This 177-nucleotide RNA was probed chemically with DMS and 2A3. For 2A3 the reverse transcriptase was SuperScript II with manganese. The 2A3 profile rests on 4,688 reads. The RNA was probed in 150 mM KOAc, 10 mM MgCl2 and 150 mM bicine (pH 8.5) at 24 C. It was measured as part of the RMDB library M2PK90. Reactivities are given for positions 27 through 126.
[RMDB]
RNA sequence: GGGAACGACUCGAGUAGAGUCGAAAAAGAAAGGUAUAUCAAAGAUCGAAAGAUCAACAAUGCUCGAUAGAUAUACAUCCCAAAUGAAGUAACAAAUCGAGCAACAUCAACGGAAACGACAAAAAAACAUAGUUUCAAAGUUCGCUUUGAAACUAUGAAAAGAAACAACAACAACAAC
Reactivity to DMS in 0.01 (KOAc 150mM, MgCl2 10mM, bicine 150mM(pH8.5), 24C), signal-to-noise 3, nucleotides 027 to 126: a040g010a100a090a120g010g020u000a000u000a000u000c000a110a090a110g010a010u000c000g000a130a080a180g000a010u000c000a100a130c250a110a110u000g010c020u000c000g000a010u000a130g000a000u000a000u000a000c000a050u010c000c000c000a080a120a060u010g010a070a090g010u000a070a110c150a040a080a050u000c000g010a010g000c010a050a100c180a050u000c150a040a090c100g010g000a060a040a080c050g010a060c060a000a010a070a050a030a110a110
Reactivity to 2A3 in 0.01 (KOAc 150mM, MgCl2 10mM, bicine 150mM(pH8.5), 24C), signal-to-noise 4, nucleotides 027 to 126: a000g120a030a070a010g080g000u010a010u000a000u030c020a050a050a040g000a000u010c000g050a120a030a010g010a000u070c010a010a040c060a090a100u040g000c000u000c000g010a010u030a080g000a000u010a010u010a020c000a040u020c000c000c010a010a030a010u170g030a060a060g170u190a130a060c090a120a140a010u020c000g020a000g140c000a000a040c050a020u090c040a030a120c070g050g070a130a080a040c040g090a050c070a040a140a020a000a030a000a020